[RMDB]
RNA sequence: GGGAACGACUCGAGUAGAGUCGAAAAGUAAGAUGAUUCGUCAUCUUACGAACCCGUUGAAGCGGCACAUACCGAGCUUCAUACAUCUAAGAGUGCAAAUAAUGGCGCGUGGUUUCGACCACGCGAACAGUGCUGAAAGCUUCGGCUUUCAGCACUGAAAAGAAACAACAACAACAAC
Reactivity to DMS in 0.01 (KOAc 150mM, MgCl2 10mM, bicine 150mM(pH8.5), 24C), signal-to-noise 2, nucleotides 027 to 126: g000u000a000a030g000a010u010g000a070u000u020c200g030u000c000a000u000c000u000u000a000c000g010a060a150c000c010c000g000u000u000g020a010a010g010c020g000g030c030a100c120a110u000a110c090c120g000a140g010c010u000u000c000a040u000a060c110a100u000c140u020a130a050g000a030g030u000g000c070a120a090a080u010a060a150u020g010g000c030g020c000g020u000g000g020u000u000u040c260g000a040c000c000a020c000g010c000g000a000a020
Reactivity to 2A3 in 0.01 (KOAc 150mM, MgCl2 10mM, bicine 150mM(pH8.5), 24C), signal-to-noise 2, nucleotides 027 to 126: g030u010a000a000g010a020u010g030a010u030u090c120g090u010c110a020u020c000u020u000a000c000g000a010a020c000c010c000g030u030u090g020a020a010g000c020g040g000c090a030c020a100u180a090c070c080g050a030g000c000u020u010c000a030u070a100c040a090u020c050u140a140a070g120a050g170u060g010c020a060a060a130u180a090a140u240g180g020c020g000c010g020u000g020g020u000u060u060c070g030a020c000c000a020c010g000c000g000a000a000